[RMDB]
RNA sequence: GGGAACGACUCGAGUAGAGUCGAAAAUUAAUGCCAAAUUCAUUGGGUUUAAAAUUAGUUAUAGUAAACCCCAGUCAGGGGCUUUUCCAGUGUAGGCAGCCUGCUAAGCUAAGAGAAGCAUGUGUGCGCAGUUUUAGUUAUUCGUAACUAAAACUGCAAAAGAAACAACAACAACAAC
Reactivity to DMS in 0.01 (KOAc 150mM, MgCl2 10mM, bicine 150mM(pH8.5), 24C), signal-to-noise 2, nucleotides 027 to 126: u010u010a130a110u010g010c010c000a070a100a140u000u010c060a050u010u020g020g000g010u010u020u010a060a090a110a120u020u000a150g010u000u000a050u010a140g030u010a050a040a060c040c010c000c140a060g020u010c280a110g000g000g000g000c040u020u000u010u000c010c010a060g050u010g010u000a150g020g020c020a090g000c040c040u000g020c020u010a030a130g000c070u000a050a080g000a070g020a100a060g010c060a030u000g030u000g000u000g010c180
The record gives the reactivity of an RNA of 177 nucleotides to DMS.
The reactions ran in a buffer of 150 mM KOAc, 10 mM MgCl2 and 150 mM bicine (pH 8.5), at 24 C.